[RMDB]
RNA sequence: GGGAACGACUCGAGUAGAGUCGAAAAGAUUUUGGCAUGAGCCGGCUCAUGGAUGCCUCGCAGGCCACCCAUGUGUCCACCCAGACUUACGGGACGAUGCCCUACAUGCCUCCAGAGCUUCUGGCGCUGACAAAAGAACUUUCGAGUUCUUUUGUCAAAAAGAAACAACAACAACAAC
Reactivity to DMS in 0.01 (KOAc 150mM, MgCl2 10mM, bicine 150mM(pH8.5), 24C), signal-to-noise 5, nucleotides 027 to 126: g000a180u010u000u010u010g010g020c030a070u010g000a170g010c110c150g010g020c020u020c020a030u010g010g000a040u010g010c020c010u000c300g020c190a200g000g010c110c110a020c030c010c010a050u000g000u010g000u000c000c040a170c040c030c020a140g000a070c100u000u010a090c140g010g000g010a090c080g010a110u010g000c010c020c020u000a140c090a020u000g010c010c020u000c030c020a040g010a140g000c120u000u000c030u000g000g010c300g010c140
Reactivity to 2A3 in 0.01 (KOAc 150mM, MgCl2 10mM, bicine 150mM(pH8.5), 24C), signal-to-noise 3, nucleotides 027 to 126: g040a030u100u120u200u220g030g020c010a000u040g020a030g090c080c080g020g020c000u010c020a030u020g000g050a030u070g020c030c000u020c070g110c120a050g030g010c030c000a040c000c000c000a010u060g040u020g000u040c010c000a030c010c000c000a040g030a080c070u190u190a030c070g020g020g070a050c050g080a100u140g020c000c000c000u040a050c020a010u060g030c000c000u000c010c000a020g020a060g120c010u090u060c020u100g030g000c040g050c060
Background:
An RNA of 177 nucleotides, treated with DMS and 2A3 and read out base by base. The RNA was probed in 150 mM KOAc, 10 mM MgCl2 and 150 mM bicine (pH 8.5) at 24 C. The data come from the RNA Mapping Database (RMDB), library OK2TST. In probing experiments dimethyl sulfate is read out at A N1 and C N3, which are open when not base-paired.